This 307-nucleotide RNA was probed chemically with DMS and 2A3.
For 2A3 the reverse transcriptase was SuperScript II with manganese.
Source: RMDB library POS240, as collected in RNAgym.
Conditions: 150 mM KOAc, 10 mM MgCl2 and 150 mM bicine (pH 8.5), 24 C.
[RMDB]
RNA sequence: GGGAACGACUCGAGUAGAGUCGAAAACCACAAGCUUCGGCUUGUGGAGGCGAUCUUCGGAUCGCCAGCAUGUUGCGUGAGCAACAUGCAAGGCCGACGGAGGCGCGCCCGAGAUGAGUAGGCUGUCCCAUCAGGGGAGGAAUCGGGGACGGCUGAAAGGCGAGGGCGCCGAAGGGUGCAGAGUUCCUCCCGCUCUGCAUGCCUGGGGGUAUGGGGAAUACCCAUACCACUGUCACGGAGGUCUCUCCGUGGAGAGCCGUCGGUCUAGCUUGUAGUUCGCUACAAGCAAAAGAAACAACAACAACAAC
Reactivity to DMS in 0.01 (KOAc 150mM, MgCl2 10mM, bicine 150mM(pH8.5), 24C), signal-to-noise 2, nucleotides 027 to 266: c000c000a010c000a000a010g010c000u000u030c230g050g000c000u000u000g020u010g000g010a040g000g020c000g000a010u000c010u000u020c200g000g010a010u000c020g020c000c000a010g000c020a000u000g030u000u000g000c020g000u020g000a300g050c000a040a020c000a020u010g010c010a130a060g020g000c010c030g010a010c020g000g000a030g000g010c170g050c000g000c000c000c000g000a300g000a010u000g020a070g000u000a160g000g010c020u000g000u000c010c000c000a080u030c010a300g000g000g000g000a020g000g000a030a010u000c170g010g020g010g000a010c010g010g010c000u000g000a030a040a020g000g000c000g000a250g010g000g030c010g100c000c000g000a000a000g000g000g010u000g000c000a010g000a010g000u010u010c000c000u000c000c000c000g010c000u000c020u000g000c000a020u000g000c010c000u010g000g010g000g020g000u010a000u000g000g000g020g000a010a020u010a010c000c000c000a000u000a010c000c000a000c000u000g000u000c000a020c010g000g000a010g010g010u000c270u020c000u000c000c000g010u000g000g010a010g000a250g000c000c000g010u000c000g000g000u000c010u000a030
Reactivity to 2A3 in 0.01 (KOAc 150mM, MgCl2 10mM, bicine 150mM(pH8.5), 24C), signal-to-noise 2, nucleotides 027 to 266: c010c000a000c000a010a010g030c000u050u300c300g120g000c000u010u020g000u000g000g020a030g000g000c000g000a010u010c010u040u070c240g130g000a000u010c000g050c010c000a010g030c010a000u030g020u010u010g020c050g080u150g140a150g000c030a000a000c000a000u020g020c020a000a010g000g000c000c030g000a010c000g020g000a000g010g000c020g020c000g000c000c000c000g010a030g010a010u010g000a000g000u000a010g020g010c020u010g010u000c040c000c000a220u300c050a030g000g020g050g030a010g070g010a040a050u300c300g050g020g000g000a010c000g010g000c010u010g000a000a010a000g030g000c000g000a010g010g000g020c000g000c000c000g030a000a000g010g000g000u010g000c000a000g000a010g000u030u060c000c010u000c050c010c000g010c010u000c000u040g000c000a000u000g040c010c000u010g010g000g000g000g010u000a000u000g010g000g000g020a000a020u140a190c020c020c000a000u000a000c000c000a000c000u000g000u000c010a000c000g000g020a020g030g050u010c010u040c000u010c020c000g000u000g000g010a040g010a000g010c030c010g000u000c010g000g010u010c000u010a000